[RMDB]
Structure probing data (DMS and 2A3) for a 177-nucleotide construct. As a SHAPE reagent, 2A3 marks flexible, mostly unpaired nucleotides at the ribose 2'-OH. Values cover nucleotides 27 to 126. The DMS profile rests on 8,446 reads. The RNA was probed in 150 mM KOAc, 10 mM MgCl2 and 150 mM bicine (pH 8.5) at 24 C. It was measured as part of the RMDB library OK1LIB.
RNA sequence: GGGAACGACUCGAGUAGAGUCGAAAAGGAGCCUCAGCACCAGCAGCGGCUAGGGGAGAUCCAGCACAUGAGCCAAGCCUGCCUCCUGUCCCUGCUGCCCGUGCCCCGGGACGUCCUGGAGACAGAGCUAGCUACCAGUUUUCGAACUGGUAGCUAGAAAAGAAACAACAACAACAAC
Reactivity to DMS in 0.01 (KOAc 150mM, MgCl2 10mM, bicine 150mM(pH8.5), 24C), signal-to-noise 5, nucleotides 027 to 126: g000g000a130g010c040c040u010c160a100g020c040a070c080c050a110g000c060a050g000c120g000g000c030u000a080g000g010g000g000a060g000a090u020c090c050a060g010c060a080c110a080u000g010a090g000c050c060a060a150g000c040c020u010g020c060c000u000c000c050u000g000u000c050c120c020u000g020c020u000g020c120c040c270g000u010g000c010c040c070c070g000g000g000a050c050g030u010c010c040u000g000g020a120g000a100c070a060g010a100g000
Reactivity to 2A3 in 0.01 (KOAc 150mM, MgCl2 10mM, bicine 150mM(pH8.5), 24C), signal-to-noise 6, nucleotides 027 to 126: g070g010a030g040c010c000u060c040a030g010c010a030c030c020a010g020c010a010g010c040g090g010c020u080a080g020g010g020g010a070g010a050u080c060c030a020g040c030a030c020a120u220g110a030g080c050c020a060a020g020c000c010u060g020c010c000u020c000c010u030g030u100c000c010c000u010g000c010u030g000c000c070c000g000u040g000c000c000c040c020g010g000g030a050c030g140u080c000c010u040g040g000a070g010a030c060a030g080a020g060